[RMDB]
RNA sequence: GGGAACGACUCGAGUAGAGUCGAAAAGAUAUGGACGACGAAGAUUGAACUACUCCCUGGGUCGGAAACGACCUCGGGAGCAAUCAGAGUCCUAAGUCAAACCAGCACAGCUUCGGCUGUGCUGGAACAUUAGUGAAAUCUUCGGAUUUCACUAAUGAAAAGAAACAACAACAACAAC
Reactivity to 2A3 in 0.01 (KOAc 150mM, MgCl2 10mM, bicine 150mM(pH8.5), 24C), signal-to-noise 3, nucleotides 027 to 126: g010a010u040a030u090g010g000a000c040g010a000c110g070a140a080g050a130u050u130g040a190a160c100u150a070c010u300c000c030c010u020g010g000g000u010c010g000g000a030a030a010c000g000a000c010c000u000c010g000g000g000a010g020c000a000a020u000c000a010g030a020g010u000c000c000u030a080a010g050u020c040a040a080a150c010c000a000g020c000a000c020a000g020c000u180u270c300g210g000c020u020g000u010g000c010u000g010g000a000a000
Reactivity to DMS in 0.01 (KOAc 150mM, MgCl2 10mM, bicine 150mM(pH8.5), 24C), signal-to-noise 6, nucleotides 027 to 126: g000a040u010a270u010g000g010a020c030g010a230c220g000a160a130g010a050u000u000g010a110a070c100u030a300c010u000c010c010c000u000g000g000g020u000c000g000g010a050a040a120c000g010a000c000c000u010c300g010g000g000a010g010c010a010a010u000c000a050g010a300g010u000c010c020u010a040a110g000u000c020a090a100a170c000c000a000g010c000a010c010a000g010c010u000u020c210g010g010c000u000g010u000g000c010u010g000g000a020a070